[RMDB]
RNA sequence: GGGAACGACUCGAGUAGAGUCGAAAACGUGCCUCUGCCCCUGUAAAUGGCGCUGUGACCCAUUAGUACUCGCAAAUGAAGUACAGAUUGAAGAGGUACCGGCGCGGUUAACAAAUCCGGCAGCGUGUCUAGGUUGGCGCUUCGGUGCCAGCCUAGAAAAAGAAACAACAACAACAAC
Reactivity to 2A3 in 0.01 (KOAc 150mM, MgCl2 10mM, bicine 150mM(pH8.5), 24C), signal-to-noise 8, nucleotides 027 to 126: c020g030u060g020c000c010u020c020u030g010c000c000c010c010u010g010u030a020a030a030u100g100g000c000g000c000u040g060u090g030a020c010c000c000a020u030u060a020g010u000a000c000u000c020g070c100a070a090a160u190g040a080a000g000u000a000c010a010g130a080u120u200g070a100a050g100a070g030g000u040a130c000c000g010g000c010g000c000g070g000u030u060a050a020c020a020a140a050u050c010c000g020g010c000a010g010c030g050u080g040
Reactivity to DMS in 0.01 (KOAc 150mM, MgCl2 10mM, bicine 150mM(pH8.5), 24C), signal-to-noise 9, nucleotides 027 to 126: c090g010u010g010c020c020u010c030u010g010c000c010c080c040u000g000u010a020a040a030u010g000g010c020g010c010u000g000u020g000a030c000c000c030a130u030u020a120g010u000a000c000u000c040g010c280a120a110a130u050g000a110a020g020u000a010c000a130g010a150u030u010g000a120a100g000a180g000g010u000a010c040c000g000g000c010g020c000g000g020u000u000a040a040c050a020a070a060u020c220c200g000g010c010a030g010c250g000u020g000
The record gives the reactivity of an RNA of 177 nucleotides to 2A3 and DMS. Values cover nucleotides 27 to 126. The DMS profile rests on 29,588 reads. It was measured as part of the RMDB library OK1LIB. The reactions ran in a buffer of 150 mM KOAc, 10 mM MgCl2 and 150 mM bicine (pH 8.5), at 24 C.